[RMDB]
RNA sequence: GGGAACGACUCGAGUAGAGUCGAAAACGGGGUCAAAUUGACUCUAGUAGGGAGUCCGUUACUUUAUAGCGACUCCCUAACGGAGUCAGGUUGACUCCCUUAAAAGCAUCUAAGUUCGCUUAGAUGCCGAUUAUAUGGCGUUCGCGCCAUAUAAUCGAAAAGAAACAACAACAACAAC
Reactivity to DMS in 0.01 (KOAc 150mM, MgCl2 10mM, bicine 150mM(pH8.5), 24C), signal-to-noise 2, nucleotides 027 to 126: c220g010g010g010g010u000c020a000a030a050u010u000g020a010c010u000c000u000a080g000u000a060g010g000g010a020g010u000c100c040g010u010u010a050c260u000u010u000a160u010a070g010c020g010a050c000u000c000c010c000u000a010a020c010g000g000a020g010u010c000a000g010g000u000u000g010a020c000u000c000c000c060u010u000a030a060a120a090g000c000a000u000c000u000a010a020g010u000u010c250g000c000u000u000a010g000a010u000g000c010
Reactivity to 2A3 in 0.01 (KOAc 150mM, MgCl2 10mM, bicine 150mM(pH8.5), 24C), signal-to-noise 3, nucleotides 027 to 126: c010g000g010g010g000u000c000a010a020a020u010u000g000a000c000u000c010u020a060g090u000a000g010g000g010a000g010u090c270c070g020u040u020a070c070u210u300u170a260u120a110g010c000g010a000c000u000c010c000c000u000a030a000c000g000g000a000g010u010c000a000g010g010u000u010g000a000c010u060c000c000c000u030u040a030a030a000a040g000c000a010u010c000u010a010a000g010u030u090c160g100c120u020u010a000g000a010u000g000c000

An RNA of 177 nucleotides, treated with DMS and 2A3 and read out base by base.
The data come from the RNA Mapping Database (RMDB), library RFMREP.
The RNA was probed in 150 mM KOAc, 10 mM MgCl2 and 150 mM bicine (pH 8.5) at 24 C.
For 2A3, 4,082 sequencing reads were counted.
Reactivities are given for positions 27 through 126.